[RMDB]
RNA sequence: GGGAACGACUCGAGUAGAGUCGAAAAUUCGGGGAAGGUCUCCCAAGAAGAACCAGGAACACCCCAAGAAGAGGAGACUUCCCCAAGGGUAGGUGGAACGCCAGGGAACAAGGAAAUAGGAGAAGGAUCUAUAGCUAUCGUUCGCGAUAGCUAUAGAAAAAGAAACAACAACAACAAC
Reactivity to DMS in 0.01 (KOAc 150mM, MgCl2 10mM, bicine 150mM(pH8.5), 24C), signal-to-noise 1, nucleotides 027 to 126: u000u000c270g020g020g050g020a030a030g020g020u000c020u000c000c010c010a220a110g000a040a060g020a090a150c020c110a150g030g000a050a060c120a110c050c010c010c040a150a100g000a100a110g020a100g000g010a020g020a050c020u020u000c000c010c020c020a000a010g010g000g040u010a030g000g050u000g000g030a020a070c150g020c030c050a120g000g010g000a030a030c110a020a100g020g010a010a080a100u010a050g020g010a060g020a050a050g000g010a150